[RMDB]
This 177-nucleotide RNA was probed chemically with DMS and 2A3. The data come from the RNA Mapping Database (RMDB), library OK1LIB.
RNA sequence: GGGAACGACUCGAGUAGAGUCGAAAACGAAACCUCGGAUCUGCCUUACUUAUCUUAUUACCCGGGUUAAGUGCAGGGAUUACGAUGUCGAAAGAGCAACCUUGUGGGUCCUUGCGGGUCCUUGUGGUAUAAAUACCGGCUUCGGCCGGUAUUUAUAAAAAGAAACAACAACAACAAC
Reactivity to DMS in 0.01 (KOAc 150mM, MgCl2 10mM, bicine 150mM(pH8.5), 24C), signal-to-noise 2, nucleotides 027 to 126: c100g010a110a140a140c060c020u000c080g000g000a020u000c020u010g010c090c120u000u020a050c030u020u010a050u020c030u030u000a100u030u030a100c050c010c020g000g020g000u000u000a030a040g000u020g020c050a000g030g010g000a050u000u010a050c040g000a030u000g010u000c040g000a130a090a060g010a170g010c070a080a080c080c020u000u030g020u010g000g020g000u000c020c000u010u000g020c090g000g000g010u000c010c000u030u040g010u010g000g010
Reactivity to 2A3 in 0.01 (KOAc 150mM, MgCl2 10mM, bicine 150mM(pH8.5), 24C), signal-to-noise 2, nucleotides 027 to 126: c010g030a130a010a000c000c000u000c060g000g010a050u010c000u050g040c020c000u060u050a100c010u050u020a030u110c010u040u070a070u090u210a190c000c010c000g000g020g020u050u050a070a010g020u020g100c030a070g010g000g000a000u060u080a060c000g010a030u030g210u150c030g020a020a120a020g070a040g040c030a000a040c000c000u080u030g120u070g050g050g020u000c020c000u010u080g000c080g000g000g030u000c000c000u020u070g030u060g050g010